[RMDB]
This 177-nucleotide RNA was probed chemically with DMS and 2A3. The reactions ran in a buffer of 150 mM KOAc, 10 mM MgCl2 and 150 mM bicine (pH 8.5), at 24 C.
RNA sequence: GGGAACGACUCGAGUAGAGUCGAAAAGACGAACGAAAACACAAAUGUUCCACGGUCCAGAAGGGUCCCUCACAUGAGGAUCACCCAUGUAACUCGGACAGGAUAUGCUUUUGGGAAAAAGAGAGAACCUAGAGAUAGCAUUCGUGCUAUCUCUAGGAAAAGAAACAACAACAACAAC
Reactivity to DMS in 0.01 (KOAc 150mM, MgCl2 10mM, bicine 150mM(pH8.5), 24C), signal-to-noise 5, nucleotides 027 to 126: g010a090c080g010a110a110c040g000a040a060a040a060c110a060c090a070a160a110u010g020u000u000c000c000a080c150g000g010u000c030c010a050g010a120a120g020g000g020u000c130c010c010u010c020a140c230a100u010g010a030g000g000a060u000c240a030c000c010c000a100u000g010u000a080a130c060u010c120g040g000a010c040a050g000g010a110u000a040u010g000c020u000u000u000u010g000g010g010a040a050a020a060a070g000a120g000a120g000a110a140
Reactivity to 2A3 in 0.01 (KOAc 150mM, MgCl2 10mM, bicine 150mM(pH8.5), 24C), signal-to-noise 4, nucleotides 027 to 126: g070a020c060g030a120a000c050g060a050a030a090a000c110a030c030a060a120a110u110g040u080u000c030c020a060c140g060g010u010c010c020a040g030a100a090g050g000g000u000c000c000c000u000c010a180c050a240u300g010a020g000g010a030u090c030a030c050c010c010a020u120g060u050a090a070c010u020c120g000g010a000c010a010g030g030a040u080a040u240g050c030u010u070u080u080g060g000g010a010a100a000a100a000g080a000g010a010g020a030a020